[RMDB]
RNA sequence: GGGAACGACUCGAGUAGAGUCGAAAAAUAGGCUUAUCAAGAGAGGUGGAGGGACUGGCCCGAUGAAACGCGGCAGCCAGAAAUGGUGCCAAUUCCUGCAGCGGAAACGUUGAAAGAUGAGCCGAUGGACCAGGGGGGUUCGCCCCCCUGAAAAGAAACAACAACAACAAC
Reactivity to DMS in 0.01 (KOAc 150mM, MgCl2 10mM, bicine 150mM(pH8.5), 24C), signal-to-noise 2, nucleotides 027 to 129: a180u010a000g000g050c000u000u040a020u000c080a150a080g080a000g040a130g030g120u000g000g030a020g000g050g030a140c070u000g000g020c000c000c030g060a040u000g060a080a120a020c240g000c140g030g030c300a000g040c000c040a040g000a060a160a100u020g000g050u010g000c000c000a000a150u030u000c000c040u000g020c000a040g000c080g000g000a040a040a070c070g010u080u000g000a090a100a160g030a000u020g030a020g000c050c000g020a140u030g000g000a120c000
Reactivity to 2A3 in 0.01 (KOAc 150mM, MgCl2 10mM, bicine 150mM(pH8.5), 24C), signal-to-noise 4, nucleotides 027 to 129: a030u210a020g000g000c000u050u000a010u050c100a110a020g100a010g000a040g130g000u090g020g090a110g000g020g040a020c060u010g010g000c010c030c010g030a060u070g070a030a060a050c230g000c000g010g020c030a020g060c010c000a010g040a000a050a020u190g000g000u030g010c000c000a000a000u040u040c020c020u040g030c030a020g020c000g000g020a000a050a010c010g020u000u010g100a080a070a040g000a010u010g000a000g000c040c000g020a040u030g080g010a010c000
This 170-nucleotide RNA was probed chemically with DMS and 2A3. The RNA was probed in 150 mM KOAc, 10 mM MgCl2 and 150 mM bicine (pH 8.5) at 24 C. 2A3 adducts were read by reverse transcription with SuperScript II with manganese.